[RMDB]
RNA sequence: GGGAACGACUCGAGUAGAGUCGAAAAGGACCCCCUUCCAAAGAGACCGGGGGGGAGUUUGGAGCGCGGGGGGGACCGUCGGGUCCGUGGGAUGCCCUUCCCGAUUCCGUCCAUCCCCACCCCCGGGUGAUCGGCACGUUCGCGUGCCGAAAAAGAAACAACAACAACAAC
Reactivity to 2A3 in 0.01 (KOAc 150mM, MgCl2 10mM, bicine 150mM(pH8.5), 24C), signal-to-noise 2, nucleotides 027 to 129: g020g020a010c010c000c000c000c000u020u190c050c030a020a020a030g130a000g050a050c020c000g000g000g000g000g000g010g000a050g010u030u060u070g030g010a130g090c100g000c020g030g000g020g010g010g000g000a060c030c000g050u030c000g010g000g030u040c020c040g040u160g030g010g000a030u190g060c000c000c010u120u150c000c010c010g010a030u180u000c010c000g000u000c000c000a050u020c000c000c000c020a210c000c040c000c000c000g010g000g030u040g010a090
Reactivity to DMS in 0.01 (KOAc 150mM, MgCl2 10mM, bicine 150mM(pH8.5), 24C), signal-to-noise 2, nucleotides 027 to 129: g090g000a180c000c000c000c000c000u070u060c020c030a090a060a080g030a130g000a160c010c050g100g050g000g010g000g010g020a040g020u000u010u080g000g000a110g030c080g000c060g000g000g000g000g130g000g050a100c010c010g020u010c160g030g010g030u030c070c040g000u000g000g010g020a090u090g030c000c000c000u000u000c050c050c050g030a200u040u000c120c070g010u000c050c000a030u030c030c020c000c000a280c070c020c040c000c000g030g020g030u020g000a080